[RMDB]
Annotation
An RNA of 177 nucleotides, treated with 2A3 and DMS and read out base by base. Conditions: 150 mM KOAc, 10 mM MgCl2 and 150 mM bicine (pH 8.5), 24 C. For DMS the reverse transcriptase was MarathonRT. It was measured as part of the RMDB libraries RFM100 and RFMREP.
RNA sequence: GGGAACGACUCGAGUAGAGUCGAAAACCUUCCUGCAGUUUUGUCUGCAGGUUGUGUGGAAAGUCUGUUCCGUCAGACUUGAAACCGAUAACUGUUAGCUAUGGCAAGCAACCAUAUUUCGUUGGCUUAUGAUCAGUUGAUUCGUCAACUGAUCAUAAAAAGAAACAACAACAACAAC
Reactivity to 2A3 in 0.01 (KOAc 150mM, MgCl2 10mM, bicine 150mM(pH8.5), 24C), signal-to-noise 8, nucleotides 027 to 126: c000c000u030u040c000c000u000g000c000a010g010u010u110u300u270g220u200c000u000g000c000a000g000g000u030u060g060u030g000u010g010g030a040a010a000g010u010c000u010g010u140u280c030c030g120u210c020a000g000a020c000u000u010g010a030a010a030c000c020g020a040u080a160a090c060u090g080u200u160a020g020c040u040a020u040g050g000c060a130a010g020c020a030a090c010c020a060u070a150u130u160u190c090g020u030u060g060g010c000u030
Reactivity to DMS in 0.01 (KOAc 150mM, MgCl2 10mM, bicine 150mM(pH8.5), 24C), signal-to-noise 5, nucleotides 027 to 126: c020c000u010u020c010c000u000g010c000a010g000u010u030u020u020g010u010c010u000g010c000a020g000g000u020u010g000u040g010u000g000g010a240a030a020g000u020c010u000g000u010u050c200c160g010u020c010a000g010a020c010u000u010g010a290a100a060c010c040g000a100u020a060a100c140u010g000u000u010a090g010c130u000a020u010g010g010c050a040a090g020c140a060a170c040c030a060u000a070u010u020u010c150g020u010u000g000g010c100u020